The record gives the reactivity of an RNA of 177 nucleotides to 2A3 and DMS. Reactivities are given for positions 27 through 126. It was measured as part of the RMDB library OK1LIB. For DMS the reverse transcriptase was MarathonRT. The 2A3 profile rests on 866 reads.

[RMDB]
RNA sequence: GGGAACGACUCGAGUAGAGUCGAAAAGUAACUCAUGCCGAGCAUCCGCGUAUAUGUCGACGAGCGUGAGAAGGGUAGUGGUGUUCCAGAAGCGCUGGCCGAGAUGGGUGUAGCGGUGAUAUACCAGAGGGGCAGUAAUAUUCGUAUUACUGCCCCUAAAAGAAACAACAACAACAAC
Reactivity to 2A3 in 0.01 (KOAc 150mM, MgCl2 10mM, bicine 150mM(pH8.5), 24C), signal-to-noise 2, nucleotides 027 to 126: g110u070a120a030c010u000c010a050u200g000c000c000g020a080g110c040a000u000c020c000g090c090g210u120a170u090a040u260g110u100c060g000a110c000g000a030g020c000g050u000g070a050g060a060a080g000g070g000u130a110g080u070g240g000u070g110u180u060c000c000a000g000a080a020g000c000g040c020u040g120g100c020c000g000a040g060a000u070g000g060g000u010g020u060a010g030c030g020g000u010g000a090u010a000u000a210c010c020a100g000
Reactivity to DMS in 0.01 (KOAc 150mM, MgCl2 10mM, bicine 150mM(pH8.5), 24C), signal-to-noise 2, nucleotides 027 to 126: g020u030a110a130c070u010c030a100u020g020c020c020g020a300g000c000a030u000c050c040g020c160g010u040a110u060a060u000g000u030c000g020a060c010g000a010g010c010g000u010g000a110g000a160a160g010g030g020u040a080g000u040g020g010u000g000u000u010c020c060a120g030a140a300g000c030g000c000u030g000g030c030c000g000a060g030a100u000g000g000g000u000g000u030a090g020c040g040g020u000g000a080u030a150u000a060c010c070a120g000